[RMDB]
RNA sequence: GGGAACGACUCGAGUAGAGUCGAAAAGAUAUGGAUCCAGGUAGGGAGCUUUGUGGUCGGAAACGACCACUGAGCGAAGAACUACUGGAUCCUAAGUCAAACCAACGGUUGUUCGCAACCGUUGGAAGAGCUAUCUUUAGUUCGCUAAAGAUAGCUCAAAAGAAACAACAACAACAAC
Reactivity to DMS in 0.01 (KOAc 150mM, MgCl2 10mM, bicine 150mM(pH8.5), 24C), signal-to-noise 3, nucleotides 027 to 126: g000a010u000a020u000g010g000a000u000c000c000a010g000g040u000a010g020g030g020a080g030c000u000u000u000g010u000g000g020u000c000g030g000a010a010a010c010g020a020c010c000a010c000u010g000a000g030c000g040a110a160g030a110a140c000u000a060c000u000g000g000a000u000c000c000u000a000a050g000u000c000a130a150a270c010c000a010a010c000g010g000u000u000g020u000u010c280g020c000a020a010c000c000g010u000u000g000g000a050a050
Reactivity to 2A3 in 0.01 (KOAc 150mM, MgCl2 10mM, bicine 150mM(pH8.5), 24C), signal-to-noise 3, nucleotides 027 to 126: g000a000u010a020u070g000g000a000u020c010c010a040g130g120u120a030g030g090g090a300g020c000u020u020u040g020u000g000g000u010c000g000g010a010a000a010c000g000a000c000c000a010c000u000g000a000g000c000g040a210a080g080a010a000c000u010a010c000u010g000g000a000u000c000c000u010a000a000g000u000c010a070a080a100c000c000a020a000c000g010g010u020u010g030u130u110c300g020c170a000a000c010c000g000u000u000g000g010a030a060

Conditions: 150 mM KOAc, 10 mM MgCl2 and 150 mM bicine (pH 8.5), 24 C.
This 177-nucleotide RNA was probed chemically with DMS and 2A3.
For DMS the reverse transcriptase was MarathonRT.
Source: RMDB library TTRDES, as collected in RNAgym.